Structure probing data (2A3 and DMS) for a 177-nucleotide construct. The reactions ran in a buffer of 150 mM KOAc, 10 mM MgCl2 and 150 mM bicine (pH 8.5), at 24 C.
RNA sequence: GGGAACGACUCGAGUAGAGUCGAAAAGUCCAGCUCGCUUUUGACGGCGCCAAAGAGGUUCGUUUGUUUAACCGACAAGCUACACGUCUAAGUAGCGUUCAAAAGCUUGUGACAAAACUGAACCAGCCGUGAUUUUAGGGUUCGCCCUAAAAUCACGAAAAGAAACAACAACAACAAC
Reactivity to 2A3 in 0.01 (KOAc 150mM, MgCl2 10mM, bicine 150mM(pH8.5), 24C), signal-to-noise 5, nucleotides 027 to 126: g040u020c020c000a030g020c030u060c040g040c020u060u120u030u130g070a080c090g070g060c030g000c010c010a080a120a050g100a030g000g020u020u000c010g000u000u010u030g060u030u110u120a110a080c060c040g040a000c030a000a000g000c000u050a020c030a000c150g120u010c020u040a130a130g050u100a060g170c000g000u040u060c050a040a030a030a000g000c000u000u010g050u050g020a030c030a020a090a000a020c100u170g010a030a000c010c000a020g070c040
Reactivity to DMS in 0.01 (KOAc 150mM, MgCl2 10mM, bicine 150mM(pH8.5), 24C), signal-to-noise 3, nucleotides 027 to 126: g020u010c010c020a150g010c040u010c040g000c020u010u020u000u010g010a040c110g040g000c010g020c130c070a100a100a100g000a030g030g000u000u000c090g010u010u000u000g000u000u010u000a110a170c240c250g000a000c000a030a000g000c000u040a110c080a040c000g000u020c030u050a200a220g030u030a070g030c000g000u000u020c130a060a050a060a040g010c000u000u000g000u010g000a070c090a040a030a020a050c040u010g000a030a040c040c000a110g000c110